Source information:
An RNA of 177 nucleotides, treated with DMS and read out base by base.
RNA sequence: GGGAACGACUCGAGUAGAGUCGAAAAGGAAUGGCUUUAGCAUGGUGGGACACUUUCAGUGAAGCCGUCAGAGAUGCUACCUGGGCAGAUUUCAAAGCAGCCUUCCGUGAGCACCACGUACCCCAGGCGGGACCUCAAUAUUCGUAUUGAGGUCCCGAAAAGAAACAACAACAACAAC
Reactivity to DMS in 0.01 (KOAc 150mM, MgCl2 10mM, bicine 150mM(pH8.5), 24C), signal-to-noise 1, nucleotides 027 to 126: g010g010a130a100u010g010g020c000u000u000u010a070g010c030a060u000g030g050u010g000g000g000a210c050a020c050u000u000u000c160a150g020u000g030a090a110g020c020c020g010u010c040a140g010a100g030a080u000g010c050u000a070c120c080u020g000g000g010c050a100g000a110u040u000u000c090a130a080a130g000c080a020g010c030c020u000u000c020c000g010u010g040a140g020c170a170c030c010a100c070g010u010a150c090c040c000c070a050g000g000

Notes: The RNA was probed in 150 mM KOAc, 10 mM MgCl2 and 150 mM bicine (pH 8.5) at 24 C.